[RMDB]
RNA sequence: GGGAACGACUCGAGUAGAGUCGAAAAGGAACAGGCCGCGGCUCACCUACGAACUUGACGCUGUCCUACUCGAAUCCCUGACCGGGUAUGAGCAUACAAAGGUAAGGCUCGGGGAUACCAUUGUCGUCAAGGACAUGAGUUUUGUACCAUAUUUAGCAACGUGGAGAUAUUUCGAUAUCUCCACGUUAAAAGAAACAACAACAACAAC
Reactivity to 2A3 in 0.01 (KOAc 150mM, MgCl2 10mM, bicine 150mM(pH8.5), 24C), signal-to-noise 2, nucleotides 027 to 156: g050g010a050a020c020a050g040g070c070c030g030c050g050g030c020u020c020a040c000c030u080a050c060g040a030a020c010u030u040g000a000c000g000c030u040g020u050c010c020u070a100c010u040c010g020a040a080u070c010c000c000u020g020a040c030c010g070g000g000u070a110u140g090a050g070c060a020u040a110c010a010a300a040g190g000u130a040a050g030g010c030u000c020g010g010g000g000a010u010a040c030c010a130u070u190g090u220c020g010u020c020a040a020g020g030a000c000a070u120g050a080g020u010u020u060u140g030u030a040c010c000a030u030a080u130u240u040a120g060c030
Reactivity to DMS in 0.01 (KOAc 150mM, MgCl2 10mM, bicine 150mM(pH8.5), 24C), signal-to-noise 2, nucleotides 027 to 156: g040g000a100a110c040a090g040g030c160c020g030c020g000g040c040u000c030a060c080c050u000a080c040g020a060a170c020u000u000g000a110c040g000c040u010g000u020c060c000u000a110c000u000c000g010a120a080u010c000c000c010u020g020a190c080c080g000g000g040u020a040u000g020a100g000c040a130u000a170c100a090a090a170g000g000u040a080a130g010g000c030u000c050g010g020g000g010a240u000a040c050c020a080u010u000g030u000c000g030u010c040a070a100g020g030a060c100a060u020g010a030g020u000u000u000u000g010u000a110c070c010a120u000a130u010u000u000a110g010c040